[RMDB]
RNA sequence: GGGAACGACUCGAGUAGAGUCGAAAAACGAGGAUUGGCACAAACUGCAGUGCACCAUUGCGGCUGAUUAUAACAGAUGUUUAGCAGGAAAAGGGAUAUUUACACGUUCCUUAAGAUUUUUAUUAACGACCUAGCUAGGAUUCGUCCUAGCUAGGUCAAAAGAAACAACAACAACAAC
Reactivity to DMS in 0.01 (KOAc 150mM, MgCl2 10mM, bicine 150mM(pH8.5), 24C), signal-to-noise 1, nucleotides 027 to 126: a100c120g040a100g000g000a110u010u000g010g000c000a040c060a040a100a190c050u000g040c030a070g000u000g010c040a140c030c040a060u000u010g000c110g000g020c030u000g000a070u010u000a080u000a070a130c070a020g000a100u000g010u030u000u010a060g020c040a030g000g020a050a200a080a090g020g040g010a060u000a040u010u020u060a060c160a280c100g010u000u000c000c010u000u010a060a150g010a070u020u020u000u000u020a090u070u010a100a100c190
The record gives the reactivity of an RNA of 177 nucleotides to DMS. DMS (dimethyl sulfate) methylates the pairing face of unpaired adenines and cytosines. It was measured as part of the RMDB library OK2TST. Conditions: 150 mM KOAc, 10 mM MgCl2 and 150 mM bicine (pH 8.5), 24 C. The DMS profile rests on 681 reads.